[RMDB]
RNA sequence: GGGAACGACUCGAGUAGAGUCGAAAAUUCUGCGCGGCCUGGUUAAAGCGCUCGACGCGCUGGACGAGGUCAUUGCACUGAUCCGGGCGUCGGAGACCGUCGAUAUCGCCCGGGCCGGACUGAUCGAGUCACCUUAGGAUUUCGAUCCUAAGGUGACAAAAGAAACAACAACAACAAC
Reactivity to 2A3 in 0.01 (KOAc 150mM, MgCl2 10mM, bicine 150mM(pH8.5), 24C), signal-to-noise 4, nucleotides 027 to 126: u040u010c020u060g060c040g030c030g010g000c000c010u040g080g000u030u140a160a180a040g010c010g010c000u010c030g050a050c030g030c100g070c000u010g050g010a030c100g250a070g030g020u030c030a080u080u250g020c050a000c030u060g000a070u000c000c000g000g010g000c010g040u020c020g050g000a080g040a090c120c030g120u140c020g040a080u060a050u280c080g030c030c000c000g000g000g000c030c010g010g020a050c050u130g000a090u130c050g060a000
Reactivity to DMS in 0.01 (KOAc 150mM, MgCl2 10mM, bicine 150mM(pH8.5), 24C), signal-to-noise 3, nucleotides 027 to 126: u020u010c030u000g000c070g040c130g000g000c000c010u010g000g000u010u000a090a100a100g010c010g000c040u000c180g000a060c110g010c000g000c000u000g010g000a020c050g010a230g000g000u000c040a070u010u030g020c040a040c060u020g000a160u010c000c000g020g010g030c000g020u000c000g000g000a090g010a090c110c060g000u050c010g000a170u030a040u030c120g000c120c010c020g000g000g010c040c030g000g000a120c070u000g010a080u020c050g010a220
Conditions: 150 mM KOAc, 10 mM MgCl2 and 150 mM bicine (pH 8.5), 24 C. This 177-nucleotide RNA was probed chemically with 2A3 and DMS. Reactivities are given for positions 27 through 126. The DMS profile rests on 5,016 reads. For 2A3 the reverse transcriptase was SuperScript II with manganese.